[RMDB]
RNA sequence: GGGAACGACUCGAGUAGAGUCGAAAAUACCAAUGGUUCGCCAUUGGUACUUGUAUAGACGAAUACUACCGUAGAAGUAUUCAGGUCUCAUAACUACGGAUAUACACUAGAGUUUCGACUCUAGUAACGGAUCGCAUAGGUUCGCCUAUGCGAUCCGAAAAGAAACAACAACAACAAC
Reactivity to 2A3 in 0.01 (KOAc 150mM, MgCl2 10mM, bicine 150mM(pH8.5), 24C), signal-to-noise 1, nucleotides 027 to 126: u040a010c000c000a000a010u020g000g050u080u080c300g080c060c020a030u000u010g000g010u000a010c010u040u180g070u050a190u120a130g110a060c060g000a010a010u010a030c020u020a180c020c000g020u010a020g000a210a000g010u000a010u020u010c040a010g100g030u000c040u000c040a070u040a160a030c000u010a010c010g020g010a070u040a010u000a080c120a000c010u010a010g000a000g020u010u090u150c110g090a010c000u000c000u000a000g000u010a000a000
The record gives the reactivity of an RNA of 177 nucleotides to 2A3. 2A3 is a SHAPE reagent: it acylates the 2'-hydroxyl of flexible nucleotides of all four kinds.